[RMDB]
RNA sequence: GGGAACGACUCGAGUAGAGUCGAAAAGUUAGGCGAGCCGACCGUCCGCGAACCGGGCGCUGAGUUCGAUUAUGGGCGCGAAGAAUACGAUGCCGUCACACUUGAGCGCGAAGAAUACGCCAGUGGGUCACGCAUCACCGAGGAGGAAAUCGCGGACCGACCAUAGGUAUUUCGAUACCUAUGGUCGAAAAGAAACAACAACAACAAC
Reactivity to 2A3 in 0.01 (KOAc 150mM, MgCl2 10mM, bicine 150mM(pH8.5), 24C), signal-to-noise 2, nucleotides 027 to 156: g100u140u100a020g050g000c030g010a020g070c030c060g050a050c030c030g040u030c000c010g050c000g000a120a170c000c000g030g040g000c010g000c040u070g010a100g120u060u170c050g020a080u030u140a060u200g000g030g000c050g000c060g080a070a030g080a110a030u270a100c190g000a000u010g050c040c000g000u000c020a000c000a010c110u130u130g090a190g070c010g030c020g070a280a090g080a090a070u300a040c000g020c010c010a000g000u000g000g050g000u040c000a000c150g040c000a000u000c000a020c010c030g100a040g000g070a040g010g010a020a040a110u010c000g000c000g040g020a000c010
The record gives the reactivity of an RNA of 207 nucleotides to 2A3.
For 2A3 the reverse transcriptase was SuperScript II with manganese.
Reactivities are given for positions 27 through 156.